RNA sequence: GGGAACGACUCGAGUAGAGUCGAAAACACACUUGAAUUGUAGCUAUCCUUGGUUCUCUUUUUACCAAUGAAUUCUGGUAGUAUGUUUUAAGAGCUGGGUGGCCUUCCUGGCCUUUGUAAACAUUUCCUGCAAUGCCUAGCUUUAGUGAGCUGCGAAGCAUUUCUAAGCAUUCGUGCUUAGAAAUGCAAAAGAAACAACAACAACAAC
Reactivity to DMS in 0.01 (KOAc 150mM, MgCl2 10mM, bicine 150mM(pH8.5), 24C), signal-to-noise 3, nucleotides 027 to 156: c030a070c060a070c040u010u010g010a090a090u000u010g030u000a090g010c030u000a080u010c030c040u010u010g020g030u000u000c120u000c050u000u000u000u010u010a050c030c020a070a120u000g000a060a130u000u010c060u000g000g030u000a040g050u010a040u000g020u000u010u010u000a060a080g010a030g010c010u000g000g030g050u000g030g020c050c040u000u000c060c080u010g030g050c000c010u000u000u010g010u000a050a050a070c070a070u000u000u000c020c010u000g010c040a050a050u000g020c020c020u010a030g020c050u000u010u000a100g010u000g010a100g060c020u000g010c020g000a100a230
Reactivity to 2A3 in 0.01 (KOAc 150mM, MgCl2 10mM, bicine 150mM(pH8.5), 24C), signal-to-noise 6, nucleotides 027 to 156: c060a000c010a010c040u040u130g060a090a080u090u090g050u110a040g030c020u040a040u130c010c000u020u030g040g000u120u030c030u040c000u090u140u050u070u090a050c030c020a080a080u120g040a100a110u170u040c070u090g070g000u010a030g020u030a060u120g060u020u070u020u090a080a030g020a010g000c020u010g010g020g000u030g020g050c020c010u070u100c030c050u020g010g010c020c010u080u100u090g090u110a040a050a010c030a080u040u090u060c010c020u040g020c040a060a050u050g000c010c010u020a000g010c000u050u050u020a070g020u050g070a030g030c030u050g040c090g060a060a020

Source information:
Structure probing data (DMS and 2A3) for a 207-nucleotide construct. The 2A3 profile rests on 4,691 reads. Conditions: 150 mM KOAc, 10 mM MgCl2 and 150 mM bicine (pH 8.5), 24 C. Source: RMDB library OK3TST, as collected in RNAgym.